Conditions: 150 mM KOAc, 10 mM MgCl2 and 150 mM bicine (pH 8.5), 24 C. This 170-nucleotide RNA was probed chemically with 2A3 and DMS. The data come from the RNA Mapping Database (RMDB), library 15KLIB. The DMS profile rests on 5,770 reads. DMS adducts were read by reverse transcription with MarathonRT. The 2A3 profile rests on 2,076 reads.
[RMDB]
RNA sequence: GGGAACGACUCGAGUAGAGUCGAAAAGGUAGUAUGAUAGAGGAUAUUGAUUAUGUACCCCUAAAAUCUGCAGUCUGUAUUACAGCUUGUAAUUUAGGGGGCGCUGUUUGUAGGAAGCAUGCUACAGGGGUCGGGACGUUCGCGUCCCGAAAAAGAAACAACAACAACAAC
Reactivity to 2A3 in 0.01 (KOAc 150mM, MgCl2 10mM, bicine 150mM(pH8.5), 24C), signal-to-noise 3, nucleotides 027 to 129: g080g000u000a000g000u010a020u060g030a040u080a040g080a050g000g010a000u010a120u090u120g130a110u230u020a050u300g120u300a300c010c040c000c000u030a000a000a000a140u060c070u050g000c000a030g020u000c000u040g040u000a170u250u300a050c000a000g000c030u060u010g030u040a090a150u030u000u010a000g010g000g000g010g000c010g010c030u250g080u070u000u050g060u020a000g020g090a050a090g100c020a000u050g030c000u000a000c010a000g060g000g050g000
Reactivity to DMS in 0.01 (KOAc 150mM, MgCl2 10mM, bicine 150mM(pH8.5), 24C), signal-to-noise 1, nucleotides 027 to 129: g030g040u020a020g000u050a050u000g000a070u030a050g050a300g060g040a170u020a030u070u000g000a060u010u020a040u000g030u010a090c070c030c010c000u010a000a000a030a160u060c170u040g000c000a030g000u030c010u020g030u040a000u000u070a020c050a000g000c000u000u040g010u000a050a040u000u000u000a000g000g010g010g000g110c090g070c110u050g010u000u000u000g030u040a010g030g000a230a110g000c030a020u020g000c000u020a030c010a100g000g020g010g040